[RMDB]
RNA sequence: GGGAACGACUCGAGUAGAGUCGAAAAGAUUAUGUGGGAGAGGCGCCCUUUCGUUUCGUCGGAUAAUUAAUUGCCAGUCGCUGGCUUUAGCGAUUUUGAUGUCAUCUGUAGCGAUGACUAUGCUACUUUAAGGUAUGAUCCGGAUACCGCCGGUAAAAUACCCAUAUACCUUCGGGUAUAUGGGUAUAAAAGAAACAACAACAACAAC
Reactivity to 2A3 in 0.01 (KOAc 150mM, MgCl2 10mM, bicine 150mM(pH8.5), 24C), signal-to-noise 2, nucleotides 027 to 156: g040a040u130u180a060u240g090u070g020g020g000a070g000a030g030g000c010g000c020c030c000u050u100u030c070g020u050u040u050c030g030u010c040g040g060a050u060a040a050u170u150a010a050u220u290g010c030c020a050g060u090c010g050c070u010g030g040c010u090u040u070a010g000c000g010a010u000u050u070u200g040a040u080g020u010c000a020u000c040u100g140u210a010g080c050g060a000u000g010a010c010u000a060u090g000c000u020a050c000u020u160u180a060a040g020g010u020a040u080g000a050u090c000c010g000g010a010u040a050c010c030g010c010c010g000g000u020a000a040a060
Reactivity to DMS in 0.01 (KOAc 150mM, MgCl2 10mM, bicine 150mM(pH8.5), 24C), signal-to-noise 2, nucleotides 027 to 156: g010a170u000u000a040u000g020u000g000g000g010a120g010a080g020g020c040g000c050c050c010u010u000u020c060g000u020u000u010c020g030u000c030g020g000a160u000a050a110u000u010a070a130u020u000g010c000c040a100g040u000c040g000c070u010g030g030c080u010u010u000a020g010c030g000a130u010u000u000u000g030a170u000g020u000c010a020u000c010u020g040u000a140g020c090g010a030u000g000a040c040u000a080u010g010c050u000a010c060u010u010u000a090a110g030g030u000a040u000g060a130u000c010c030g010g000a170u000a090c080c060g050c030c000g050g020u000a010a090a080